RNA sequence: GGGAACGACUCGAGUAGAGUCGAAAAAAGUAGCGGUUUGAGCAAUGUGUAUAGACAGUAACCCGGUAAAAUGUACUGAAAAUAGGGAUAAGAGUUGAACAGGUGCAAAGUGAAUAAGUAAAUUAUGAUGGUCAGUAUAGUUCGCUAUACUGACCAUAAAAGAAACAACAACAACAAC
Reactivity to 2A3 in 0.01 (KOAc 150mM, MgCl2 10mM, bicine 150mM(pH8.5), 24C), signal-to-noise 2, nucleotides 027 to 126: a000a000g050u060a010g020c000g020g060u000u010u190g040a010g000c000a020a010u030g000u020g000u040a010u000a160g030a010c000a010g070u100a020a090c000c020c030g040g000u080a070a120a000a030u140g030u010a000c010u000g070a040a000a100a110u110a080g050g000g010a010u050a070a020g080a000g010u020u040g010a100a030c010a020g060g010u010g010c020a020a020a020g070u130g070a000a000u050a090a020g100u180a170a080a020u190u170a070u250g140
Reactivity to DMS in 0.01 (KOAc 150mM, MgCl2 10mM, bicine 150mM(pH8.5), 24C), signal-to-noise 5, nucleotides 027 to 126: a050a060g010u000a040g010c080g010g000u010u030u030g010a090g000c070a080a050u010g010u000g000u010a050u020a090g010a130c060a070g000u010a070a100c050c040c010g030g030u030a040a050a070a100u030g010u020a050c050u000g010a070a030a060a090u020a080g010g000g000a070u010a070a070g020a060g000u000u010g010a060a080c080a030g000g030u000g000c070a050a070a080g020u010g000a050a040u020a040a060g010u020a030a050a090u030u010a060u020g010